[RMDB]
RNA sequence: GGGAACGACUCGAGUAGAGUCGAAAAAGAAUGAGUCAGCACCACCACCGCCGCCACCACCGAUGAUGCCAGCGUUAGAAAGCCUAAUGUCAUUCUGUAAUUCUAGCGCUAGACCACCGUCUGUAGCAUUGUCUCCGCUAGCGUCUGCACCGUUACCCAUAGGGUCACUGUUCGCAGUGACCCUAUGAAAAGAAACAACAACAACAAC
Reactivity to DMS in 0.01 (KOAc 150mM, MgCl2 10mM, bicine 150mM(pH8.5), 24C), signal-to-noise 2, nucleotides 027 to 156: a110g000a110a070u000g010a120g020u010c030a140g030c060a060c030c020a060c020c010a080c060c050g000c020c040g000c030c040a070c030c010a080c090c020g000a070u010g010a070u000g070c040c010a050g010c000g040u000u010a010g000a040a080a280g010c040c030u000a030a060u000g030u000c020a040u000u000c000u010g010u000a100a180u000u010c000u010a000g020c000g010c010u000a040g030a030c030c060a040c030c010g030u000c020u010g010u000a070g000c040a120u010u000g000u000c010u010c040c020g010c020u000a080g030c030g020u010c030u010g000c040a130c100c010g020u010u000a080c030c020
Reactivity to 2A3 in 0.01 (KOAc 150mM, MgCl2 10mM, bicine 150mM(pH8.5), 24C), signal-to-noise 2, nucleotides 027 to 156: a010g070a030a070u080g010a040g080u050c020a020g010c030a040c040c020a030c030c030a050c060c090g030c020c040g020c090c000a050c010c000a030c030c010g050a070u050g000a000u000g030c000c030a000g000c010g010u010u000a030g020a010a060a030g060c040c070u130a140a060u170g100u070c050a080u130u060c060u080g100u130a110a090u000u030c010u000a000g000c000g000c010u000a000g020a020c000c080a050c060c060g060u060c030u050g090u090a020g030c020a060u040u120g070u030c030u010c040c010g010c030u050a020g000c040g020u000c030u010g020c020a010c000c020g000u020u120a040c000c020

An RNA of 207 nucleotides, treated with DMS and 2A3 and read out base by base. For 2A3, 1,473 sequencing reads were counted. For DMS, 5,949 sequencing reads were counted. The reactions ran in a buffer of 150 mM KOAc, 10 mM MgCl2 and 150 mM bicine (pH 8.5), at 24 C. The data come from the RNA Mapping Database (RMDB), library OK3TST. Reactivities are given for positions 27 through 156. DMS adducts were read by reverse transcription with MarathonRT.